[RMDB]
An RNA of 177 nucleotides, treated with 2A3 and DMS and read out base by base. 2A3 adducts were read by reverse transcription with SuperScript II with manganese.

RNA sequence: GGGAACGACUCGAGUAGAGUCGAAAACAAUCCACCUCAUCAACGAUUUCCGGGGUGAGGAAAACGCAAUCAGGAACGGUCUUCUUUCUGUUCGGAUAAUCGCGGCACUGGCAGGUUUCGGGGUUGACCACGUACUAUCAUUCGUGAUAGUACGUGGAAAAGAAACAACAACAACAAC
Reactivity to 2A3 in 0.01 (KOAc 150mM, MgCl2 10mM, bicine 150mM(pH8.5), 24C), signal-to-noise 3, nucleotides 027 to 126: c020a000a070u030c010c010a020c000c010u010c000a030u010c000a080a300c050g100a140u100u160u170c140c040g020g020g010g000u010g010a020g000g000a020a080a010a010c050g000c040a030a060u030c020a070g020g150a040a040c040g040g050u030c060u150u030c010u060u220u000c010u050g060u060u060c010g010g030a050u080a130a090u160c060g000c010g040g000c020a000c090u070g030g000c030a010g010g040u020u070u060c020g010g000g010g020u070u070g020a020
Reactivity to DMS in 0.01 (KOAc 150mM, MgCl2 10mM, bicine 150mM(pH8.5), 24C), signal-to-noise 4, nucleotides 027 to 126: c130a140a090u010c030c050a230c010c010u000c010a040u010c010a090a140c040g010a170u000u010u010c100c020g000g020g000g020u010g000a020g010g010a050a040a050a120c100g010c100a110a040u000c030a060g000g020a050a040c060g020g000u000c110u010u000c070u010u000u000c030u010g010u000u010c040g000g000a060u000a090a070u000c090g000c040g000g010c060a030c060u000g010g020c040a050g000g000u000u010u000c090g000g000g000g010u000u010g010a240